[RMDB]
RNA sequence: GGGAACGACUCGAGUAGAGUCGAAAACUUUCAGGGCUAGUUCAAAAGAUAUUGCCUCUGAGACUCUGCAUAAGUCAGCUGCUUGUUUAUCAGAGUGAAAGUACGAGCGAUUUCCAAGGAUGUAGUCAAACUAUGUUCAUUUCGAUGAACAUAGUUUAAAAGAAACAACAACAACAAC
Reactivity to 2A3 in 0.01 (KOAc 150mM, MgCl2 10mM, bicine 150mM(pH8.5), 24C), signal-to-noise 7, nucleotides 027 to 126: c030u040u130u100c070a080g070g000g010c010u030a010g030u030u050c030a080a100a030a020g020a020u050a040u050u060g010c030c010u050c010u030g030a030g030a020c010u000c010u010g030c050a020u020a060a030g090u140c030a020g030c080u180g020c030u210u160g030u050u070u030a040u040c010a010g020a020g030u040g070a210a070a010g060u090a040c080g020a020g040c010g040a070u030u000u000c010c010a010a010g050g000a030u080g060u260a010g010u020c030
Reactivity to DMS in 0.01 (KOAc 150mM, MgCl2 10mM, bicine 150mM(pH8.5), 24C), signal-to-noise 9, nucleotides 027 to 126: c080u000u000u000c070a090g020g010g010c010u000a090g010u000u000c030a050a080a150a170g000a020u000a030u000u000g010c090c020u000c020u000g010a260g000a050c010u000c010u000g000c240a020u000a020a020g010u010c050a060g020c180u010g010c100u010u000g010u000u000u000a040u000c010a010g000a030g010u000g010a080a090a090g010u000a080c170g010a060g010c020g010a050u000u000u000c010c010a070a200g000g000a040u000g000u000a030g010u000c060
The data come from the RNA Mapping Database (RMDB), library OK2TRN. This 177-nucleotide RNA was probed chemically with 2A3 and DMS. The RNA was probed in 150 mM KOAc, 10 mM MgCl2 and 150 mM bicine (pH 8.5) at 24 C. The DMS profile rests on 36,483 reads. For 2A3, 18,662 sequencing reads were counted. 2A3 adducts were read by reverse transcription with SuperScript II with manganese.